This 207-nucleotide RNA was probed chemically with 2A3.
RNA sequence: GGGAACGACUCGAGUAGAGUCGAAAAACAAAGACAUUGGCACCCUAUAUCUUGUAUUUGGUGCCUGAGCCGGAAUAGUUGGAACCGCCCUCAGCCUACUUAUUCGAGCUGAAUUAAACCAACCAGGGGCACUCCUCGGUGAUGACCAAAUUUAUAAACUUGGCACUUUAUUCGUAAAGUGCCAAGUAAAAGAAACAACAACAACAAC
Reactivity to 2A3 in 0.01 (KOAc 150mM, MgCl2 10mM, bicine 150mM(pH8.5), 24C), signal-to-noise 1, nucleotides 027 to 156: a000c050a000a040a010g130a010c070a120u190u240g010g000c000a030c010c010c010u040a030u010a010u090c170u080u190g050u010a010u000u020u150g000g000u000g000c000c000u000g000a000g040c020c000g000g080a090a190u130a050g050u030u050g030g050a080a000c010c030g000c030c000c000u010c010a040g000c010c000u080a080c040u210u230a180u050u220c050g040a030g050c000u070g000a000a030u090u230a060a020a110c030c040a010a000c010c000a000g000g000g000g000c030a030c040u020c000c000u000c010g000g000u030g010a000u040g070a000c000c010a010a040a300u090u300u300a080u300a300a030

About this RNA:
It was measured as part of the RMDB library OK3TST.